The record gives the reactivity of an RNA of 177 nucleotides to DMS and 2A3.
For 2A3 the reverse transcriptase was SuperScript II with manganese.
For DMS the reverse transcriptase was MarathonRT.
Reactivities are given for positions 27 through 126.
RNA sequence: GGGAACGACUCGAGUAGAGUCGAAAAGAUAUGGAGGUAGAACUACCGUUAACCGAAGAACUCGCUCGGAAACGAGCGAGGGAGGGGAGCGGCUACCUCCUAAGUCAAAGGCUGCUUCGGCAGCCAACAGUAUGCCAAUGUUCGCAUUGGCAUACUGAAAAGAAACAACAACAACAAC
Reactivity to DMS in 0.01 (KOAc 150mM, MgCl2 10mM, bicine 150mM(pH8.5), 24C), signal-to-noise 2, nucleotides 027 to 126: g000a040u000a300u000g000g010a010g010g040u020a000g020a050a020c080u020a300c010c000g000u000u000a120a230c000c030g000a070a140g010a160a200c010u010c020g000c010u010c000g000g000a090a070a140c010g010a030g010c000g000a000g000g010g000a070g000g000g000g000a100g010c000g000g010c000u000a000c000c000u010c000c000u000a010a060g020u000c040a090a130a160g020g030c000u000g020c000u000u000c180g050g010c000a000g000c000c000a020a040
Reactivity to 2A3 in 0.01 (KOAc 150mM, MgCl2 10mM, bicine 150mM(pH8.5), 24C), signal-to-noise 2, nucleotides 027 to 126: g030a020u070a050u160g020g020a010g010g020u020a020g020a160a080c150u150a040c300c020g020u030u030a040a050c030c010g110a300a020g000a050a020c010u000c000g000c010u000c010g030g040a060a100a080c000g000a000g050c010g000a000g000g010g010a010g000g010g000g020a020g000c010g030g000c000u010a010c000c000u010c000c000u020a000a000g010u000c000a080a060a000g010g000c020u010g000c010u080u110c270g130g000c000a000g000c030c000a000a000